An RNA of 177 nucleotides, treated with DMS and 2A3 and read out base by base. DMS (dimethyl sulfate) methylates the pairing face of unpaired adenines and cytosines. The 2A3 profile rests on 7,122 reads. For DMS the reverse transcriptase was MarathonRT. It was measured as part of the RMDB library OK2TRN.
[RMDB]
RNA sequence: GGGAACGACUCGAGUAGAGUCGAAAACGUCCAGGGGUCAGCAACCUGCAGCAGAUGUGGAUGCUUUGAAGGAUCCAGCCAGGAAGCUGCCUGCUGCAAAGGCAAAGCCAGCGGGGACCUUGAAGCACCCCUCAUAACUAUUCGUAGUUAUGAGGGGAAAAGAAACAACAACAACAAC
Reactivity to DMS in 0.01 (KOAc 150mM, MgCl2 10mM, bicine 150mM(pH8.5), 24C), signal-to-noise 6, nucleotides 027 to 126: c160g010u010c050c030a120g010g000g020g000u000c030a070g010c040a070a240c060c020u000g010c080a080g010c040a070g020a150u010g020u000g010g000a070u000g000c010u000u010u010g000a170a070g000g010a060u000c040c020a090g000c060c020a060g010g000a070a200g010c050u000g000c040c010u000g010c050u000g020c120a060a090a080g010g010c090a100a060a140g000c050c020a050g010c020g010g010g010g010a080c020c030u000u010g000a050a070g000c140a150
Reactivity to 2A3 in 0.01 (KOAc 150mM, MgCl2 10mM, bicine 150mM(pH8.5), 24C), signal-to-noise 5, nucleotides 027 to 126: c040g080u020c010c010a030g030g010g000g020u090c010a000g010c010a040a070c000c010u030g000c020a040g000c020a030g040a300u200g100u110g180g030a050u100g100c010u160u140u250g240a220a090g000g000a020u010c030c010a020g050c020c010a010g060g000a040a000g000c010u010g020c010c010u010g010c000u020g000c010a110a090a080g110g000c020a100a040a020g030c040c030a020g010c010g030g010g010g020a030c000c010u020u070g040a050a020g040c020a040